[RMDB]
RNA sequence: GGGAACGACUCGAGUAGAGUCGAAAACUUCUUCCUUCUCCCCAGGGGUUCCUCAUAGAGAGCAAGCUGCUGAGCCUUCUCCUGCCCCUGGAGCAGAAUGAAUGCUAUCUGCUGAGGCUGGAUGCCAUCUUCUCCGUGAGUCCAACGGGGCUGGGAACUCAGGGAUUACUUUCGAGUAAUCCCUGAGAAAAGAAACAACAACAACAAC
Reactivity to 2A3 in 0.01 (KOAc 150mM, MgCl2 10mM, bicine 150mM(pH8.5), 24C), signal-to-noise 1, nucleotides 027 to 156: c000u060u080c030u050u060c000c040u090u210c070u060c040c000c010c040a050g010g000g080g090u070u120c070c050u100c090a020u160a030g120a000g020a000g120c060a060a030g010c040u130g010c110u140g120a030g000c030c000u000u040c020u010c010c020u020g060c000c010c000c010u010g000g000a000g010c010a000g020a140a070u110g070a070a080u120g000c050u150a150u130c020u030g080c020u060g030a010g030g000c020u130g030g010a060u050g000c040c010a060u030c000u120u070c070u040c000c000g060u000g050a080g040u050c010c030a030a050c030g010g020g000g000c070u040g000g000g060a020a020
An RNA of 207 nucleotides, treated with 2A3 and read out base by base.
The RNA was probed in 150 mM KOAc, 10 mM MgCl2 and 150 mM bicine (pH 8.5) at 24 C.